[RMDB]
RNA sequence: GGGAACGACUCGAGUAGAGUCGAAAAGGACCAUUGCUGUUCGCCAGGAUUUGGCUAGUGCGAAUAAUUUGAAAACCCUGGAUGAUUUAGGCAAAUGGAUUAAUGCGGGUGGCAAAUUCAAAUUGGCCGCAAGAAGAAACUUCGGUUUCUUCUUGCGAAAAGAAACAACAACAACAAC
Reactivity to DMS in 0.01 (KOAc 150mM, MgCl2 10mM, bicine 150mM(pH8.5), 24C), signal-to-noise 1, nucleotides 027 to 126: g020g030a120c000c020a070u000u000g010c040u000g010u000u000c020g010c010c040a020g000g020a110u000u000u000g020g000c000u000a080g000u000g040c150g020a110a070u010a080a070u010u000u010g000a080a070a090a060c060c010c000u000g000g020a040u000g000a030u000u000u010a110g020g010c030a020a020a060u010g000g000a120u010u020a090a070u000g010c110g010g000g050u000g010g000c030a020a050a070u010u000c110a010a080a120u000u020g000g020c090
This 177-nucleotide RNA was probed chemically with DMS. The reactions ran in a buffer of 150 mM KOAc, 10 mM MgCl2 and 150 mM bicine (pH 8.5), at 24 C. The DMS profile rests on 985 reads. DMS adducts were read by reverse transcription with MarathonRT.